[RMDB]
RNA sequence: GGGAACGACUCGAGUAGAGUCGAAAAUUCCGUGUUGCCUCCGCCACAUCCGCAUCUCUUCCACCGGCUCUCCCGACGCCUCGCGCUCGGUCGAGAGUCUACCUCCUCCCCGAGUCAACCCCCUGUGCUAAAUUAUACACUUCGGUGUAUAAUUUAGAAAAGAAACAACAACAACAAC
Reactivity to 2A3 in 0.01 (KOAc 150mM, MgCl2 10mM, bicine 150mM(pH8.5), 24C), signal-to-noise 8, nucleotides 027 to 126: u060u010c010c010g020u030g040u050u070g020c020c010u030c020c020g030c030c010a030c010a060u040c010c010g020c020a080u030c020u000c000u090u020c020c020a060c020c030g010g000c000u000c000u000c000c010c000g010a030c070g020c000c060u130c130g040c030g010c040u010c000g000g040u080c050g000a010g000a000g030u000c010u020a030c000c000u020c000c000u020c000c000c000c000g000a010g010u010c010a030a080c000c000c000c000c020u050g020u040g080
Reactivity to DMS in 0.01 (KOAc 150mM, MgCl2 10mM, bicine 150mM(pH8.5), 24C), signal-to-noise 7, nucleotides 027 to 126: u010u020c000c010g040u010g010u000u000g000c040c010u010c040c050g000c030c040a060c080a070u010c040c030g010c060a070u010c020u000c030u000u010c030c050a090c120c080g010g000c010u000c010u000c010c000c010g000a020c090g000c010c070u020c300g010c060g020c100u000c010g000g000u020c140g010a040g010a030g030u000c010u000a110c050c010u000c020c000u000c020c000c000c010g000a040g010u000c030a100a300c060c020c000c020c030u000g010u010g000

Chemical mapping of a 177-nucleotide RNA with 2A3 and DMS. As a SHAPE reagent, 2A3 marks flexible, mostly unpaired nucleotides at the ribose 2'-OH. Source: RMDB libraries RFM100 and RFMREP, as collected in RNAgym. For DMS the reverse transcriptase was MarathonRT. The RNA was probed in 150 mM KOAc, 10 mM MgCl2 and 150 mM bicine (pH 8.5) at 24 C. Reactivities are given for positions 27 through 126.